[RMDB]
RNA sequence: GGGAACGACUCGAGUAGAGUCGAAAAGAAAUACAUGAUUCAUGGUUUACAUGUGUCAAGGUGAAAUCUGAGUUGGCUUUUACAGAUAGUUGACUUUCUAUCUUUUGGCAUUCUUUGGUGUGUAGAAGACUACCAGCCUAUUCGUAGGCUGGUAGUCAAAAGAAACAACAACAACAAC
Reactivity to DMS in 0.01 (KOAc 150mM, MgCl2 10mM, bicine 150mM(pH8.5), 24C), signal-to-noise 1, nucleotides 027 to 126: g060a060a110a110u030a040c040a080u010g010a050u000u000c010a010u010g000g000u000u000u000a060c040a030u000g000u010g030u000c020a000a120g000g020u000g040a040a110a080u000c020u000g000a120g040u000u000g060g020c010u000u010u000u000a100c180a080g010a060u000a010g040u010u000g000a080c110u000u000u000c040u000a030u010c040u010u010u010u000g010g010c030a130u000u000c030u000u030u010g020g010u000g020u000g020u000a070g000a090a180

Chemical mapping of a 177-nucleotide RNA with DMS. DMS adducts were read by reverse transcription with MarathonRT. Reactivities are given for positions 27 through 126. DMS (dimethyl sulfate) methylates the pairing face of unpaired adenines and cytosines. Source: RMDB library OK2TRN, as collected in RNAgym. The reactions ran in a buffer of 150 mM KOAc, 10 mM MgCl2 and 150 mM bicine (pH 8.5), at 24 C.